RNA sequence: GGGAACGACUCGAGUAGAGUCGAAAACGCGCGCAAAUCGAACAGCUUGUCAGGGAAGUGCUCGCGCAGAGCCUUGCAAGUGGGGAGGCUGUGCUACCUGUGGCGAUGCGUGCGGACACAGCCGAUGACGUAUGCGGCAGUUCGCUGCCGCAUACGUAAAAGAAACAACAACAACAAC
Reactivity to DMS in 0.01 (KOAc 150mM, MgCl2 10mM, bicine 150mM(pH8.5), 24C), signal-to-noise 1, nucleotides 027 to 126: c010g020c000g040c000g000c060a020a030a060u050c110g070a210a060c170a200g150c020u000u030g000u020c080a070g000g000g000a090a070g000u000g000c000u000c020g030c180g000c080a000g000a170g010c020c040u000u000g000c000a000a000g060u000g000g000g010g030a210g000g000c000u000g020u050g000c000u000a110c070c000u000g070u000g000g000c040g020a110u000g100c000g020u040g020c000g000g010a110c020a040c100a150g000c040c020g040a270u040g000
Reactivity to 2A3 in 0.01 (KOAc 150mM, MgCl2 10mM, bicine 150mM(pH8.5), 24C), signal-to-noise 2, nucleotides 027 to 126: c000g000c000g000c030g000c000a060a060a290u060c000g060a150a070c000a040g050c000u060u000g090u090c040a010g040g010g020a070a040g070u100g140c030u070c100g000c000g000c030a010g000a000g100c000c000u100u060g010c000a060a050g020u080g040g080g000g000a010g020g030c000u030g000u020g000c040u090a070c000c000u080g000u040g110g060c000g000a010u000g000c030g000u000g000c050g050g000a000c010a000c030a000g060c000c000g010a060u190g090